[RMDB]
RNA sequence: GGGAACGACUCGAGUAGAGUCGAAAAACUAAUCCAAAGCAAGUAUAGGAGAACAGGUUUUUAACUAUUUUUAGGCUGAUAAAAAAUAGUAUUUGACAGUCUAACACUAACUGAACAAUAAGUGUUAAAAACUCCCUCCUGUUCGCAGGAGGGAGAACGAAUCCUUUAGGUUCGCCUAAAGGAUUCGAAAAGAAACAACAACAACAAC
Reactivity to 2A3 in 0.01 (KOAc 150mM, MgCl2 10mM, bicine 150mM(pH8.5), 24C), signal-to-noise 2, nucleotides 027 to 156: a000c030u050a060a050u020c010c000a010a010a010g000c000a000a010g010u020a030u040a090g000g020a030g010a060a040c110a180g080g000u010u000u010u000u020a050a000c010u010a010u010u010u010u010u010a060g120g000c090u100g160a170u250a060a040a000a000a000a000u000a000g000u000a040u020u010u020g010a000c000a000g010u030c000u010a000a000c000a000c010u010a010a000c000u000g040a040a000c000a010a020u010a010a000g000u000g010u020u020a010a050a000a010a000c000u000c000c000c010u000c010c000u010g010u050u060c200g000c050a000g000g000a000g010g000g000a000g000a000a000
Source: RMDB library M2RFOK, as collected in RNAgym. Chemical mapping of a 207-nucleotide RNA with 2A3. The reactions ran in a buffer of 150 mM KOAc, 10 mM MgCl2 and 150 mM bicine (pH 8.5), at 24 C. For 2A3 the reverse transcriptase was SuperScript II with manganese.